An RNA of 177 nucleotides, treated with DMS and 2A3 and read out base by base. High 2A3 reactivity points to a flexible backbone, as in loops and unpaired stretches. For DMS, 2,906 sequencing reads were counted. The data come from the RNA Mapping Database (RMDB), library OK1LIB. For DMS the reverse transcriptase was MarathonRT. DMS (dimethyl sulfate) methylates the pairing face of unpaired adenines and cytosines. The RNA was probed in 150 mM KOAc, 10 mM MgCl2 and 150 mM bicine (pH 8.5) at 24 C. Values cover nucleotides 27 to 126.

[RMDB]
RNA sequence: GGGAACGACUCGAGUAGAGUCGAAAACAGCGCUACCAGGUCCUUGACGAGAUCACCCUGCUGGUCGACAAGUCACUGGUGAUGGCCGACGACAACAGCGGCCGGACGUGCUAUCGGUUAUGCGAGAAGCCAACCUAUGAUUCGUCAUAGGUUGGCUAAAAGAAACAACAACAACAAC
Reactivity to DMS in 0.01 (KOAc 150mM, MgCl2 10mM, bicine 150mM(pH8.5), 24C), signal-to-noise 2, nucleotides 027 to 126: c090a100g020c060g040c060u020a040c060c000a030g010g010u000c160c020u000u000g000a070c040g030a140g000a030u010c070a090c060c060c100u010g020c000u000g010g020u010c010g000a060c020a060a020g020u000c190a130c030u000g030g000u030g010a120u070g000g020c030c010g010a080c040g000a140c160a080a130c230a120g030c050g000g000c060c010g020g000a140c090g010u000g010c050u020a100u020c040g020g000u040u020a030u070g020c010g010a050g000a150
Reactivity to 2A3 in 0.01 (KOAc 150mM, MgCl2 10mM, bicine 150mM(pH8.5), 24C), signal-to-noise 4, nucleotides 027 to 126: c020a010g040c020g000c030u030a010c010c000a020g040g050u060c020c040u070u040g050a090c050g060a010g000a120u030c000a040c000c120c030u100g090c090u000g020g000u010c010g010a040c020a100a030g000u030c030a020c110u030g040g000u050g050a110u090g000g010c010c000g030a180c000g030a090c060a230a040c060a260g040c000g000g000c010c010g000g030a060c080g030u050g000c010u090a060u120c040g010g020u040u100a080u190g120c050g020a130g000a080